[RMDB]
RNA sequence: GGGAACGACUCGAGUAGAGUCGAAAAGAUUAAGUGGGAGCGUCGCCCUCUCGGUGCAUCGGAUAUUAAUUAGCCAGUGCGUGGCACUACGCAUAUUGAUGUCUACUUUGGCGUAGACUUUGCCAAUUUAAGGAUUGGUGGGCAAUCCAGCCCUAGAAGUGACCAUGGUAUUCGUACCAUGGUCACUAAAAGAAACAACAACAACAAC
Reactivity to 2A3 in 0.01 (KOAc 150mM, MgCl2 10mM, bicine 150mM(pH8.5), 24C), signal-to-noise 1, nucleotides 027 to 156: g020a030u080u150a110a000g030u090g000g020g010a040g030c010g020u050c030g080c000c000c000u020c010u040c050g010g020u080g010c020a050u030c000g040g000a050u060a040u060u140a270a100u090u140a030g050c000c040a000g020u000g010c040g010u020g060g040c110a030c140u110a020c020g030c030a020u030a130u100u080g220a120u050g010u070c000u000a090c000u170u070u130g110g000c060g090u030a000g030a080c000u050u120u000g000c000c000a000a000u000u070u170a070a080g130g000a040u000u000g000g040u050g030g020g000c000a000a080u050c040c040a030g000c000c010c000u070a110g050a170
Overview
An RNA of 207 nucleotides, treated with 2A3 and read out base by base. Source: RMDB library OK3TST, as collected in RNAgym. Conditions: 150 mM KOAc, 10 mM MgCl2 and 150 mM bicine (pH 8.5), 24 C.